Source: RMDB library RFMREP, as collected in RNAgym. This 177-nucleotide RNA was probed chemically with 2A3 and DMS. Values are in units of 0.01, from 0 to 300, in steps of 10. For 2A3 the reverse transcriptase was SuperScript II with manganese. The 2A3 profile rests on 2,850 reads. For DMS the reverse transcriptase was MarathonRT. The DMS profile rests on 3,800 reads.

[RMDB]
RNA sequence: GGGAACGACUCGAGUAGAGUCGAAAAGCUACACGCAAGUGACAUGGUGGUCAGGCUGCCGGAUAGCAGAUAGAGCGUGUGAUUCUUUGGAAACAGCAAAGGAUGGUUUAUCUGAUCUGAAAGACAGCACCAUUAACUUCUUCGGAAGUUAAUGGUGAAAAGAAACAACAACAACAAC
Reactivity to 2A3 in 0.01 (KOAc 150mM, MgCl2 10mM, bicine 150mM(pH8.5), 24C), signal-to-noise 3, nucleotides 027 to 126: g020c000u040a020c000a000c010g000c020a040a030g080u010g060a030c030a100u160g070g020u070g040g000u020c000a030g190g020c010u020g020c000c030g180g070a110u170a040g020c020a010g000a030u120a020g060a010g010c040g030u050g020u020g020a050u030u010c010u000u040u060g050g020a120a160a080c040a060g060c030a020a030a010g030g010a020u060g070g040u030u080u090a070u040c000u010g030a040u000c010u050g100a090a070a030g050a000c020a020g010
Reactivity to DMS in 0.01 (KOAc 150mM, MgCl2 10mM, bicine 150mM(pH8.5), 24C), signal-to-noise 3, nucleotides 027 to 126: g000c100u000a060c010a020c010g020c050a110a050g020u000g010a040c050a070u010g000g000u000g020g030u010c030a040g030g000c020u000g010c010c010g010g010a120u010a070g020c010a010g000a050u000a080g000a040g010c010g020u010g020u000g010a060u000u000c020u000u000u000g000g010a100a110a100c290a070g000c060a020a020a070g000g010a030u010g000g020u000u010u010a060u020c010u000g000a140u010c020u000g010a060a080a140g000a050c090a040g000